[RMDB]
RNA sequence: GGGAACGACUCGAGUAGAGUCGAAAAGCUCAAACCCUCUCUCCUACCUAAAGGGAGGGGAAAUGAGUACACUUUAAAAGUAUAAAAGUAACCUUGCAUGUGGCGCUUCGUAACACAGUCUUUACAUUUUUACAUUGCACCCCCAGCCCCUCCCACAAGAUCAUUUCACUUUCGAGUGAAAUGAUCUAAAAGAAACAACAACAACAAC
Reactivity to 2A3 in 0.01 (KOAc 150mM, MgCl2 10mM, bicine 150mM(pH8.5), 24C), signal-to-noise 1, nucleotides 027 to 156: g000c000u010c000a010a030a010c010c020c000u030c010u010c030u030c020c050u110a280c010c050u140a130a100a060g010g000g000a020g020g020g000g010a000a050a060u030g000a000g000u070a020c000a050c120u040u120u120a040a160a070a070g050u090a080u090a210a080a000a020g040u000a000a060c020c020u030u100g020c040a040u050g000u010g110g010c010g020c060u150u100c020g050u030a010a020c070a000c010a200g090u000c100u090u150u120a060c050a140u120u190u000u000u030a110c030a160u000u110g020c030a080c030c000c000c000c000a010g020c000c020c010c000u000c020c010c000a010c000a020
Structure probing data (2A3) for a 207-nucleotide construct.
It was measured as part of the RMDB library OK3TST.
The 2A3 profile rests on 688 reads.
High 2A3 reactivity points to a flexible backbone, as in loops and unpaired stretches.